The data come from the RNA Mapping Database (RMDB), library OK2TST.
An RNA of 177 nucleotides, treated with 2A3 and DMS and read out base by base.
The DMS profile rests on 20,414 reads.
Values cover nucleotides 27 to 126.
RNA sequence: GGGAACGACUCGAGUAGAGUCGAAAAAGUUUUCAUUUGUGGAUUUAUAUGUCUGUAGAAUUUUCAUCUGUGUUAGCUGAAUGAGCUACUGUGUUCUAUUUCUCUGCCAGAUGAGUGCUAGAGAGGACAGUAUCAGGUAAUUCGUUACCUGAUACUGAAAAGAAACAACAACAACAAC
Reactivity to 2A3 in 0.01 (KOAc 150mM, MgCl2 10mM, bicine 150mM(pH8.5), 24C), signal-to-noise 5, nucleotides 027 to 126: a000g050u090u020u020u070c090a100u100u100u130g070u090g040g040a070u000u160u070a170u100a070u220g090u000c020u020g200u040a020g030a160a160u090u070u140u090c010a000u000c000u010g110u020g050u300u280a020g010c080u000g050a060a010u020g010a020g020c010u080a150c100u150g100u040g000u160u000c050u030a060u030u080u010c010u000c000u000g010c010c010a020g010a050u040g030a020g000u040g010c010u050a050g010a010g000a020g150g040a030
Reactivity to DMS in 0.01 (KOAc 150mM, MgCl2 10mM, bicine 150mM(pH8.5), 24C), signal-to-noise 7, nucleotides 027 to 126: a140g000u000u000u000u010c030a120u010u000u000g020u000g000g000a190u000u000u010a070u010a100u020g010u000c020u000g010u000a030g010a050a050u000u000u010u000c010a020u000c010u000g010u010g010u000u010a020g020c120u000g010a040a030u010g000a030g010c010u000a090c300u010g010u000g020u000u000c010u000a090u000u000u000c020u000c010u000g010c020c010a030g000a030u000g010a040g010u000g010c020u010a020g000a050g010a060g000g010a220